[RMDB]
RNA sequence: GGGAACGACUCGAGUAGAGUCGAAAAAUGGGAAAGGAAAAGGUGCACAUGAAUCUUGUGGUGGUGGGCCACGUCGAUGCCGGUAAAUCCACUGCAACGGGUCACUUGAUCUACAAGUGCGGUGGUACCGUAAUAGCGAGUUCGCUCGCUAUUACGGAAAAGAAACAACAACAACAAC
Reactivity to 2A3 in 0.01 (KOAc 150mM, MgCl2 10mM, bicine 150mM(pH8.5), 24C), signal-to-noise 5, nucleotides 027 to 126: a000u090g020g000g020a030a040a020g020g020a050a060a010a040g060g000u050g010c030a020c010a070u110g100a110a050u050c060u040u060g020u040g020g010u020g030g040u090g010g020g040c020c020a050c030g080u070c060g040a040u060g020c010c010g010g010u040a020a030a060u060c020c000a020c020u020g000c000a050a000c030g040g000g000u010c000a040c250u130u260g020a020u000c010u080a020c060a160a070g050u000g000c000g000g010u000g000g000u020a040
Reactivity to DMS in 0.01 (KOAc 150mM, MgCl2 10mM, bicine 150mM(pH8.5), 24C), signal-to-noise 4, nucleotides 027 to 126: a010u050g000g000g000a070a050a040g020g010a050a040a040a050g020g020u000g010c040a070c090a050u020g000a100a080u010c070u000u030g020u000g010g030u030g000g000u020g010g010g030c010c070a060c070g010u000c080g010a070u010g010c030c020g010g000u030a020a060a040u040c000c000a010c000u000g000c020a030a030c120g020g000g020u000c010a190c260u020u020g010a070u010c060u020a100c130a120a080g000u000g000c020g000g000u010g010g000u010a130